[RMDB]
Chemical mapping of a 177-nucleotide RNA with DMS.
RNA sequence: GGGAACGACUCGAGUAGAGUCGAAAAUCUAUGAUGCAGCAGACAAGUAUAUGAAGGAAGGGGUGCCCACGAUUGUUUUGGCAGGAAAGGAAUAUGGCUCCGGUUCCUCGCGGGAUUGGGCCGCAAAGCUGUAAGCGAGAUUCGUCUCGCUUACAGCAAAAGAAACAACAACAACAAC
Reactivity to DMS in 0.01 (KOAc 150mM, MgCl2 10mM, bicine 150mM(pH8.5), 24C), signal-to-noise 1, nucleotides 027 to 126: u010c050u000a050u000g000a060u000g030c040a070g000c070a070g010a070c060a080a080g000u000a080u000a080u000g010a120a090g010g030a110a070g000g010g000g030u000g020c050c040c080a050c070g000a140u000u000g010u000u000u000u000g010g000c000a040g000g000a050a080a120g000g000a020a060u020a080u000g010g020c030u000c020c000g020g010u000u000c010c000u000c280g010c220g000g040g020a170u010u000g010g010g040c000c020g000c150a030a060a090
About this RNA
The reactions ran in a buffer of 150 mM KOAc, 10 mM MgCl2 and 150 mM bicine (pH 8.5), at 24 C.